[RMDB]
RNA sequence: GGGAACGACUCGAGUAGAGUCGAAAAGUACCACAACUGGCACCCAGGGGCGAGCAGCCGCAAAUUGCACGUCGGCGAGUGGGGAAGCGCUACCGGCACGGUCACCGGCUCCCAGCAGGUGGCCAGCGGCGCGCUGUCGAUCGCUGAUCCUCGAGCAUGUGUAAAUACAAUUCGUUGUAUUUACACAAAAAGAAACAACAACAACAAC
Reactivity to 2A3 in 0.01 (KOAc 150mM, MgCl2 10mM, bicine 150mM(pH8.5), 24C), signal-to-noise 4, nucleotides 027 to 156: g030u050a030c000c010a040c070a100a080c080u050g050g000c010a050c040c000c040a040g020g010g020g030c020g020a060g020c080a010g040c030c040g010c070a100a110a060u110u100g030c040a030c080g060u050c010g000g010c030g010a010g050u120g000g050g040g030a030a010g000c010g010c010u070a150c030c000g230g010c080a060c120g000g000u000c000a010c000c010g020g000c020u120c020c040c000a010g000c020a010g000g000u000g000g000c000c000a000g000c000g030g000c010g000c020g010c020u020g100u060c020g050a070u020c010g000c040u020g010a040u030c000c030u060c030g000a030g040c060a110
Reactivity to DMS in 0.01 (KOAc 150mM, MgCl2 10mM, bicine 150mM(pH8.5), 24C), signal-to-noise 3, nucleotides 027 to 156: g010u000a070c020c010a060c060a120a100c150u000g020g010c060a070c040c020c020a150g000g000g000g020c080g040a130g010c040a160g000c030c030g000c040a040a080a130u020u000g010c040a110c130g020u000c040g030g020c030g000a060g010u020g010g030g000g010a070a020g010c020g010c020u000a060c010c000g010g000c020a080c100g000g020u010c010a020c000c000g000g030c010u000c150c150c060a190g040c030a040g020g020u000g020g000c000c030a030g010c000g030g030c300g020c020g010c010u000g000u000c020g000a090u000c020g020c020u000g000a050u010c060c040u000c010g000a110g040c090a260